[RMDB]
RNA sequence: GGGAACGACUCGAGUAGAGUCGAAAAGAAAAGACGAUGUUAUUAUGAUUCUCGAGUAAUAGCAGGUCACGCGUACUACUCGCCGAACGGAAGGCCGACUGUUCGCGAAAUGAAACGAGCAAGAAAACCGGAUUAUUAUCUUCGGAUAAUAAUCCGGAAAAGAAACAACAACAACAAC
Reactivity to 2A3 in 0.01 (KOAc 150mM, MgCl2 10mM, bicine 150mM(pH8.5), 24C), signal-to-noise 3, nucleotides 027 to 126: g060a020a050a000a020g060a030c040g070a120u010g000u030u010a050u020u010a020u070g090a080u130u160c100u100c120g040a030g020u020a010a040u000a010g000c000a010g000g050u020c020a010c060g000c020g020u060a010c000u020a040c000u020c010g030c050c060g030a060a040c050g020g050a090a030g100g010c000c000g010a020c010u030g000u040u060c000g000c000g040a030a010a080u180g010a050a000a040c110g010a020g020c010a110a030g060a140a110a000a020
Reactivity to DMS in 0.01 (KOAc 150mM, MgCl2 10mM, bicine 150mM(pH8.5), 24C), signal-to-noise 2, nucleotides 027 to 126: g020a110a050a070a080g000a120c050g000a080u000g000u000u010a010u000u000a020u020g000a140u010u020c010u000c090g040a210g010u000a020a040u000a020g000c030a010g000g030u000c020a010c070g020c000g010u000a110c030u010a090c090u000c030g000c100c060g020a070a060c050g010g000a060a150g000g030c050c010g000a100c000u000g010u000u000c020g000c060g000a050a100a050u000g000a050a060a090c030g010a080g000c120a060a080g000a100a110a210a110
The record gives the reactivity of an RNA of 177 nucleotides to 2A3 and DMS. Reactivities are given for positions 27 through 126. It was measured as part of the RMDB library OK1LIB. For DMS the reverse transcriptase was MarathonRT.